[RMDB]
RNA sequence: GGGAACGACUCGAGUAGAGUCGAAAAAACGAUGCAUGAUCGUAAAACAUGCCCGGCUUACCGUGAGCCGCCUUUGAAAGAAAGGUUUACACGGACUCUGUUGCGUUACGCACGUACCUAACUUGUGAAAACGGCAUCUUGUUCGCAAGAUGCCGAAUCAAUGACGACCGUUCGCGGUCGUCAUUGAAAAAGAAACAACAACAACAAC
Reactivity to 2A3 in 0.01 (KOAc 150mM, MgCl2 10mM, bicine 150mM(pH8.5), 24C), signal-to-noise 1, nucleotides 027 to 156: a000a000c000g000a000u000g000c000a020u000g020a100u130c030g030u130a030a030a030a030c010a000u000g000c050c000c000g020g000c000u010u080a180c000c000g030u000g000a000g010c000c040g000c060c000u060u010u010g040a060a040a000g030a000a010a000g010g000u010u060u020a010c000a010c000g050g010a070c070u020c000u030g130u090u000g020c020g000u000u050a070c170g000c020a010c020g010u040a050c030c010u100a190a220c070u150u090g070u080g170a060a040a010a010c000g000g000c010a000u000c010u010u020g020u040u030c180g000c120a010a010g000a000u020g000c000c000g000a010a000